RNA sequence: GGGAACGACUCGAGUAGAGUCGAAAAAUAUAUCUGGAAUGUUUUCAAAUGCUGUGAUAACAUUUAUAUUUAGAUGGAAGUGAGCAUGUUUACUUAAAUGUCUGGUUUAUUACUUUCACCUUAAAUAAUUGAGAAGAAACAGUGACCUUAGGUAAAACUGUAUAAGUUGAUUCGUCAACUUAUACAGAAAAGAAACAACAACAACAAC
Reactivity to 2A3 in 0.01 (KOAc 150mM, MgCl2 10mM, bicine 150mM(pH8.5), 24C), signal-to-noise 3, nucleotides 027 to 156: a000u130a000u040a030u080c090u090g010g030a080a040u030g040u010u040u050u070c040a070a130a110u120g030c050u050g020u020g070a060u050a120a000c000a020u020u070u040a120u040a040u030u070u080a030g010a000u030g010g020a020a030g010u040g050a000g040c020a040u060g050u120u160u060a060c040u060u100a060a070a060u060g040u030c020u050g040g060u080u090u080a060u060u030a030c010u030u000u040c040a040c010c000u040u030a050a080a040u070a030a060u090u080g040a060g010a110a040g010a010a110a010c010a030g020u020g030a010c030c000u020u080a010g030g000u130a020a230a020a020
Reactivity to DMS in 0.01 (KOAc 150mM, MgCl2 10mM, bicine 150mM(pH8.5), 24C), signal-to-noise 2, nucleotides 027 to 156: a130u010a100u000a060u000c060u000g000g020a120a050u000g000u010u000u000u010c050a050a050a120u000g010c010u000g020u000g010a130u000a050a090c020a050u000u000u010a110u000a040u050u000u020a070g020a070u000g020g010a060a060g020u000g020a110g010c030a070u000g010u010u000u000a130c100u000u000a030a060a110u000g010u000c080u000g030g010u000u000u000a060u020u000a020c020u000u000u000c000a030c020c020u000u000a010a040a080u000a050a120u020u000g010a150g000a100a110g010a160a130a060c020a040g010u010g020a070c050c070u000u010a040g030g020u000a040a060a050a170